[RMDB]
RNA sequence: GGGAACGACUCGAGUAGAGUCGAAAAGGGGUCCACCGCGAAACGCUCCUUUGUAUUCUUGGACCUACUGAAGCCUCCACGGUAGCUAGAAUGGGAGCGGAGGUGGACGGAGGCACCCAAAGUUCCUUCAAACACGUUCGCGUGUUUGAAGGAACAACACUUUAAUGAGGUUCGCCUCAUUAAAGUGAAAAGAAACAACAACAACAAC
Reactivity to DMS in 0.01 (KOAc 150mM, MgCl2 10mM, bicine 150mM(pH8.5), 24C), signal-to-noise 1, nucleotides 027 to 156: g000g000g020g010u000c000c010a010c040c020g000c120g020a100a120a100c040g010c000u010c010c010u000u000u000g010u000a060u000u000c010u000u000g040g020a140c170c020u010a080c020u000g000a110a160g020c010c010u000c010c010a300c060g030g020u000a040g050c030u010a030g000a050a030u010g040g000g010a030g020c000g010g010a110g000g060u000g010g020a010c050g000g010a010g050g050c010a140c010c000c000a120a070a120g020u010u010c000c000u020u010c010a000a030a000c010a010c010g000u020u000c300g050c050g050u000g010u000u000u000g010a000a010g000g050a000a000c000a050a150
Reactivity to 2A3 in 0.01 (KOAc 150mM, MgCl2 10mM, bicine 150mM(pH8.5), 24C), signal-to-noise 5, nucleotides 027 to 156: g100g020g050g020u010c000c000a000c000c000g050c080g100a120a080a030c020g010c010u000c010c020u160u280u290g240u200a140u070u050c050u060u150g120g070a160c010c020u000a000c000u020g010a100a020g000c000c000u020c000c000a020c010g010g010u010a010g050c010u020a030g030a110a070u120g090g000g010a000g000c000g000g000a020g000g010u000g000g000a000c000g000g000a000g000g010c010a060c000c010c010a050a080a010g010u000u000c000c000u010u020c000a010a000a000c000a010c010g050u090u090c250g030c000g090u010g010u020u000u010g000a000a000g010g000a000a000c000a000a000